[RMDB]
RNA sequence: GGGAACGACUCGAGUAGAGUCGAAAAGGUGAUAAACAUGGGGUAUUUGAAAGACCGUAUUAUAAACGAAGACCAUAAGGCCUUGUUAGAGGAAAAGUACUACCAGACUGACAUGUCAUUACCUGGAAUUAGCGUAGUAUUUCGAUACUACGCUAAUAAAAGAAACAACAACAACAAC
Reactivity to DMS in 0.01 (KOAc 150mM, MgCl2 10mM, bicine 150mM(pH8.5), 24C), signal-to-noise 7, nucleotides 027 to 126: g020g020u010g000a040u000a110a080a060c100a080u000g010g010g000g010u000a030u000u000u010g020a100a110a100g010a090c060c040g000u000a070u000u010a100u010a060a070a070c070g010a060a050g000a050c030c020a100u010a110a100g010g010c010c010u000u000g010u000u010a080g010a100g000g000a070a080a050a090g010u000a040c040u000a070c040c030a050g000a100c110u000g010a070c120a030u000g010u000c050a030u000u000a060c050c010u000g010g010a140
Reactivity to 2A3 in 0.01 (KOAc 150mM, MgCl2 10mM, bicine 150mM(pH8.5), 24C), signal-to-noise 4, nucleotides 027 to 126: g010g000u020g010a050u050a060a120a010c030a030u060g060g000g010g040u040a090u020u110u100g160a110a090a030g040a040c010c030g010u040a090u190u120a090u100a020a120a010c060g040a050a000g030a030c010c010a040u050a260a090g050g020c010c010u030u020g060u060u100a090g030a060g040g000a040a140a000a000g030u030a030c010u070a200c010c010a030g020a050c040u050g010a030c030a070u070g000u010c010a030u000u070a040c020c000u010g030g020a100
This 177-nucleotide RNA was probed chemically with DMS and 2A3. The data come from the RNA Mapping Database (RMDB), library OK2TST.